Description
Source: RMDB library TTRDES, as collected in RNAgym. An RNA of 177 nucleotides, treated with DMS and 2A3 and read out base by base. For 2A3 the reverse transcriptase was SuperScript II with manganese. The 2A3 profile rests on 18,787 reads.
RNA sequence: GGGAACGACUCGAGUAGAGUCGAAAAGAUAUGGAGGCAGUGGACAUGCUCAGGAUCGGAAACGAUCUGGGAGCAACAGCCAUUUGCCUCCUAAGUCAAAACUUUCGGUAGUUCGCUACCGAAAGAACUUACUAUCCCUGUUCGCAGGGAUAGUAAGAAAAGAAACAACAACAACAAC
Reactivity to DMS in 0.01 (KOAc 150mM, MgCl2 10mM, bicine 150mM(pH8.5), 24C), signal-to-noise 7, nucleotides 027 to 126: g000a030u000a080u010g010g010a020g010g010c010a000g010u000g010g000a040c090a240u020g020c000u010c000a300g000g000a010u000c000g000g000a040a020a050c000g010a000u000c000u010g000g030g010a010g020c000a060a060c260a110g000c000c010a000u000u020u010g020c000c010u010c000c000u000a000a070g000u000c020a110a080a110a220c000u000u000u000c000g010g010u000a000g010u000u020c270g020c000u000a010c000c010g000a000a000a010g010a050a080
Reactivity to 2A3 in 0.01 (KOAc 150mM, MgCl2 10mM, bicine 150mM(pH8.5), 24C), signal-to-noise 6, nucleotides 027 to 126: g010a010u020a020u060g010g000a000g010g000c010a010g010u020g020g020a080c150a300u300g000c000u010c010a020g020g000a010u010c000g020g010a020a010a000c040g010a010u000c030u030g150g220g000a000g010c020a070a070c090a080g000c010c000a020u280u190u110g000c000c010u000c000c000u000a000a000g000u010c010a000a020a080a150c000u010u010u000c000g010g010u010a020g020u060u080c300g010c140u010a000c000c000g000a000a000a000g000a010a000

The reactions ran in a buffer of 150 mM KOAc, 10 mM MgCl2 and 150 mM bicine (pH 8.5), at 24 C.